An RNA of 177 nucleotides, treated with 2A3 and DMS and read out base by base.
The RNA was probed in 150 mM KOAc, 10 mM MgCl2 and 150 mM bicine (pH 8.5) at 24 C.
For 2A3, 942 sequencing reads were counted.
2A3 adducts were read by reverse transcription with SuperScript II with manganese.
It was measured as part of the RMDB library RFM100.
RNA sequence: GGGAACGACUCGAGUAGAGUCGAAAAUCUGUCAAUCAAGGGCGAAGGCCGGGGGCUAGAAGGCGAUCAGACACCACCGUAUUCCCGGCCGUAAACGGUGCCGCCCCGCGGCCGGCGCGCGCGUCCCCACAAUCUUGAGCUUCGGCUCAAGAUUGUGAAAAGAAACAACAACAACAAC
Reactivity to 2A3 in 0.01 (KOAc 150mM, MgCl2 10mM, bicine 150mM(pH8.5), 24C), signal-to-noise 2, nucleotides 027 to 126: u060c060u070g230u170c060a020a040u070c010a080a060g040g040g000c000g000a060a010g010g020c000c000g000g000g020g000g000c080u150a030g060a140a020g160g000c000g010a070u130c050a020g040a150c040a000c070c000a030c020c020g000u020a080u100u080c000c000c090g000g000c010c010g000u000a010a000a010c030g020g000u050g000c020c020g030c010c000c010c000g170c000g000g000c000c020g000g000c010g000c000g030c000g010c020g060u070c000c040c000
Reactivity to DMS in 0.01 (KOAc 150mM, MgCl2 10mM, bicine 150mM(pH8.5), 24C), signal-to-noise 2, nucleotides 027 to 126: u010c040u000g000u030c110a040a060u020c160a040a140g050g000g030c010g020a070a060g010g000c000c000g000g000g000g010g000c070u000a110g020a120a160g000g000c040g010a090u000c120a090g020a130c130a060c170c020a060c040c010g050u000a130u010u000c020c040c000g010g000c000c050g000u060a020a100a070c050g020g000u010g030c170c100g000c040c040c020c000g020c000g050g000c080c000g000g000c090g010c020g000c060g010c120g010u030c000c000c020